[RMDB]
RNA sequence: GGGAACGACUCGAGUAGAGUCGAAAAUGCUCUGCUUGGCUGUGUGUCGGUGUGGCUUGCCCCCCUGCAGAGGGUGGCGCGGGUCCGCCGUUGAAGCGAGGGAACCGGGUCAGGCCGGAAACGGAGCAGCCCACCCCACGCACGUCCGCCGUUGCAGCGGCGUACUUAUCUUCGGAUAAGUACGCCGAAAAGAAACAACAACAACAAC
Reactivity to 2A3 in 0.01 (KOAc 150mM, MgCl2 10mM, bicine 150mM(pH8.5), 24C), signal-to-noise 1, nucleotides 027 to 156: u130g010c060u010c000u040g000c000u030u110g040g000c020u050g020u010g000u010g020u110c030g040g000u060g030u100g000g000c000u000u050g000c000c010c000c000c000c000u020g030c050a030g050a030g290g030g030u200g020g000c100g000c010g060g000g010u020c020c000g040c030c000g040u040u040g080a060a000g020c030g000a120g010g000g010a130a140c170c190g000g020g050u080c010a000g000g060c040c000g050g000a030a070a030c010g020g010a050g010c000a010g000c000c020c000a010c020c000c000c000a090c020g000c000a010c000g060u000c020c010g000c010c010g100u030u070g000c060a050g010